[RMDB]
RNA sequence: GGGAACGACUCGAGUAGAGUCGAAAAGUUAUGCUCUCGCUGCCUAAUGGCGGUGCGGGAAACCCACUCUACAGUCCUUAGGGUUAGCCCCUUAAGGCGGGGUUCGGAGGCACCUGGCAACAGAAGCUGAAACUGUGCACAUUCGUGUGCACAGUAAGUCAGUAUUACUUUUCGAAGUAAUACUGACAAAAGAAACAACAACAACAAC
Reactivity to DMS in 0.01 (KOAc 150mM, MgCl2 10mM, bicine 150mM(pH8.5), 24C), signal-to-noise 2, nucleotides 027 to 156: g000u010u000a030u000g030c000u000c010u010c020g040c000u000g000c010c030u010a090a110u010g000g010c050g020g020u010g040c070g000g000g000a080a050a130c030c010c030a160c080u010c040u010a080c060a180g000u010c000c020u000u000a050g000g010g000u000u010a190g000c150c260c000c020u000u000a040a080g020g060c000g010g030g010g010u000u000c040g040g000a300g010g010c020a020c040c010u000g000g030c010a040a120c030a130g000a060a070g010c010u000g000a110a060a050c000u010g020u000g010c000a040c010a120u010u030c260g010u010g010u010g000c000a010c010a000g000u000a000a090
Reactivity to 2A3 in 0.01 (KOAc 150mM, MgCl2 10mM, bicine 150mM(pH8.5), 24C), signal-to-noise 7, nucleotides 027 to 156: g070u110u110a120u300g040c000u010c000u000c020g010c020u030g000c010c010u300a300a240u260g010g010c030g020g050u040g010c020g000g000g010a050a020a030c000c010c020a050c040u140c070u140a160c090a190g300u080c010c010u010u010a000g000g000g030u040u080a030g020c010c010c000c000u020u030a010a000g000g000c000g020g000g000g000u010u200c070g090g010a040g020g000c000a010c010c000u030g230g000c010a020a010c000a020g020a010a000g000c010u030g010a070a010a020c000u000g000u000g000c000a010c000a010u030u100c180g110u050g000u000g020c000a010c000a000g000u000a000a000